[RMDB]
RNA sequence: GGGAACGACUCGAGUAGAGUCGAAAAGAGUAACGGUUUUCCUAAAUCGUCGUGAGACGGACCUUGGAGAACCUGGUAUUAAAAUAACAAGGUCCAAAUGAAGCGUAGAGAGAUAAGACUACGCAAAAAUCCCAGUACUAUUCGUAGUACUGGGAUUAAAAGAAACAACAACAACAAC
Reactivity to 2A3 in 0.01 (KOAc 150mM, MgCl2 10mM, bicine 150mM(pH8.5), 24C), signal-to-noise 8, nucleotides 027 to 126: g120a020g080u180a050a030c040g000g020u010u000u030u030c010c000u000a010a020a010u090c020g010u010c020g030u060g140a080g000a020c020g000g000a000c000c000u010u020g010g000a030g010a010a010c010c010u000g000g020u050a130u110u200a060a090a070a090u210a090a040c090a040a010g000g010u020c030c030a000a090a130u210g060a160a030g010c010g000u010a000g010a000g010a000g010a110u080a260a030g050a090c000u000a000c000g000c000a080a000a000
Reactivity to DMS in 0.01 (KOAc 150mM, MgCl2 10mM, bicine 150mM(pH8.5), 24C), signal-to-noise 6, nucleotides 027 to 126: g020a120g000u030a090a120c090g000g000u000u000u010u000c010c010u000a010a020a030u010c010g020u000c000g000u090g000a220g020a030c010g020g000a020c030c010u000u000g000g000a050g000a010a010c010c010u010g020g010u020a090u020u050a050a070a120a090u030a060a130c150a140a010g000g010u000c030c100a060a090a090u020g010a120a100g000c000g010u010a000g000a120g000a150g010a130u050a100a100g010a140c000u000a000c000g020c010a000a030a080